[RMDB]
RNA sequence: GGGAACGACUCGAGUAGAGUCGAAAAUGAUGCGGUGCGCAUCGCCAACGACUCGCCAUACGGCUUGUCGGGCACCGUGUAUGGCGCCGACCCGCAGCGCGCCGCGAGGAUUGCCUCGCGGCUGCGGUCCACAGUGAUUCUUCGGAAUCACUGUGGAAAAAGAAACAACAACAACAAC
Reactivity to DMS in 0.01 (KOAc 150mM, MgCl2 10mM, bicine 150mM(pH8.5), 24C), signal-to-noise 3, nucleotides 027 to 126: u000g010a030u010g030c010g000g010u000g030c030g020c170a100u000c070g000c040c020a160a190c000g000a010c010u000c110g010c030c030a190u030a130c150g040g010c020u000u000g010u000c000g000g000g010c040a030c030c040g000u000g010u000a090u010g010g010c020g020c260c080g030a140c080c010c010g020c130a120g010c010g050c050g010c020c000g000c010g020a000g010g000a300u000u020g000c020c000u000c020g000c000g000g000c000u010g020c010g010g000
Reactivity to 2A3 in 0.01 (KOAc 150mM, MgCl2 10mM, bicine 150mM(pH8.5), 24C), signal-to-noise 3, nucleotides 027 to 126: u180g060a030u140g010c010g030g030u060g000c160g010c110a120u060c040g060c040c010a060a050c010g000a000c000u010c010g010c000c010a230u240a300c190g020g000c000u000u020g020u010c050g000g050g000c030a030c040c060g000u000g050u050a180u070g020g010c030g000c030c040g050a100c010c010c030g020c050a010g080c030g020c000g010c030c000g020c010g000a000g040g030a280u300u300g120c000c000u010c000g000c000g010g000c040u090g000c010g020g040